[RMDB]
RNA sequence: GGGAACGACUCGAGUAGAGUCGAAAAGACCUACCGUGAUGAACUGAAAAAGAUUCAAAGUAGCGGUUUGAGCAAUGUGUAUAGACAGUAACCCGGUAAAAUGUACUGAAAAUAGGGAUAAGAGUUGUCACCCCUCCACUUUCGAGUGGAGGGGUGAAAAAGAAACAACAACAACAAC
Reactivity to DMS in 0.01 (KOAc 150mM, MgCl2 10mM, bicine 150mM(pH8.5), 24C), signal-to-noise 1, nucleotides 027 to 126: g030a170c000c000u000a010c020c060g040u030g060a130u010g040a050a060c030u000g000a190a240a130a160a190g000a080u010u000c060a000a030a110g000u010a110g020c000g000g030u000u060u000g060a030g030c130a180a120u020g000u000g000u030a190u030a070g000a060c000a020g000u000a190a080c120c070c040g010g110u000a140a040a120a010u120g000u050a010c010u150g000a090a100a090a090u020a140g000g000g010a090u040a010a010g020a070g000u030u000g000